[RMDB]
RNA sequence: GGGAACGACUCGAGUAGAGUCGAAAAGAUAUGGAGCGAUAUGCACGCCACUAGAGGAUCUCUCGGAAACGAGAGAUCUACCCACCUAGUGGAACUACGUGUUUAUCGCUCCUAAGUCAAACCGACAUCGAACAGUUUCGACUGUUCGAUGUCGGAAGUACCAGAAGAUGUUCGCAUCUUCUGGUACAAAAGAAACAACAACAACAAC
Reactivity to DMS in 0.01 (KOAc 150mM, MgCl2 10mM, bicine 150mM(pH8.5), 24C), signal-to-noise 1, nucleotides 027 to 156: g000a000u010a010u010g000g000a020g000c000g000a010u000a010u010g000c010a040c000g000c050c020a010c010u000a010g000a230g050g010a010u020c000u000c010u000c000g020g000a070a020a040c010g020a010g010a010g020a000u000c000u000a010c020c000c090a300c040c000u000a000g010u000g000g000a000a040c020u010a240c070g020u000g010u000u000u010a000u000c010g040c000u010c000c000u040a000a080g000u000c010a050a110a120c040c000g000a020c000a000u000c000g000a070a030c010a020g080u000u000u000c280g020a040c020u000g030u000u030c010g040a010u020g000u000c000g000g020a000a020
An RNA of 207 nucleotides, treated with DMS and read out base by base. The RNA was probed in 150 mM KOAc, 10 mM MgCl2 and 150 mM bicine (pH 8.5) at 24 C. The DMS profile rests on 2,288 reads.